[RMDB]
RNA sequence: GGGAACGACUCGAGUAGAGUCGAAAAGGCUGCCGAUGCAGAGCCCGUGGACCGCCUUACGGACGGCGUGCCUGACCGGCGUUGCGCACCGCAAGAUGGCCGUGCCCAUCGACCUGCCCUCCGGCCAAGGACAGUUCCUAUUCGUAGGAACUGUCCUAAAAGAAACAACAACAACAAC
Reactivity to 2A3 in 0.01 (KOAc 150mM, MgCl2 10mM, bicine 150mM(pH8.5), 24C), signal-to-noise 4, nucleotides 027 to 126: g040g010c020u030g000c020c030g070a050u150g060c040a020g020a030g070c000c020c000g000u050g040g000a080c010c010g060c020c070u150u120a070c040g070g050a020c010g030g030c030g010u090g040c010c000u060g020a090c010c030g010g000c050g080u100u120g000c020g010c010a020c020c010g030c020a070a030g040a080u060g040g000c040c020g040u080g000c000c020c000a020u030c020g050a070c000c000u040g000c000c010c000u030c000c000g020g000c030c020a040
Reactivity to DMS in 0.01 (KOAc 150mM, MgCl2 10mM, bicine 150mM(pH8.5), 24C), signal-to-noise 2, nucleotides 027 to 126: g020g000c040u000g010c020c070g010a080u000g010c040a030g020a120g020c060c050c000g020u010g000g000a100c060c080g010c050c030u040u010a120c110g020g000a180c110g000g000c100g000u010g040c030c020u010g000a170c170c060g000g020c030g010u020u020g020c110g000c020a110c020c020g000c100a070a090g010a030u000g020g020c020c020g020u000g000c050c010c000a030u000c010g010a070c040c020u010g020c010c030c030u000c000c000g010g020c050c070a090